[RMDB]
RNA sequence: GGGAACGACUCGAGUAGAGUCGAAAAGGUGAAAGCGAAUCGGGGAAGAUAAGCUAGCAGCAAAAAGGAACCGAUUCCCACCAAGGUCGGAAAGAGAUACCGGGCGAGGCGCUGAAGAAAGAAUCUCAAACUCCCGCAAGUUUCGACUUGCGGGAAAUCCACAUGGAUAGUUCGCUAUCCAUGUGGAAAAAGAAACAACAACAACAAC
Reactivity to 2A3 in 0.01 (KOAc 150mM, MgCl2 10mM, bicine 150mM(pH8.5), 24C), signal-to-noise 2, nucleotides 027 to 156: g070g000u020g060a200a010a020g030c080g030a010a000u010c010g010g000g000g060a040a030g040a120u120a140a060g000c030u070a070g090c100a020g000c030a060a020a060a000a100g130g000a030a000c010c000g030a030u020u010c000c000c000a000c000c010a070a020g020g040u050c030g000g060a120a090a030g040a010g010a020u030a080c000c040g010g020g010c040g030a030g020g040c040g020c110u050g010a040a030g010a020a100a010g050a050a090u050c020u000c030a150a080a060c060u010c000c000c000g000c000a000a000g010u070u110u000c030g050a040c000u000u010g020c000g000g010g000a000a000a000
The record gives the reactivity of an RNA of 207 nucleotides to 2A3. Conditions: 150 mM KOAc, 10 mM MgCl2 and 150 mM bicine (pH 8.5), 24 C. The 2A3 profile rests on 860 reads.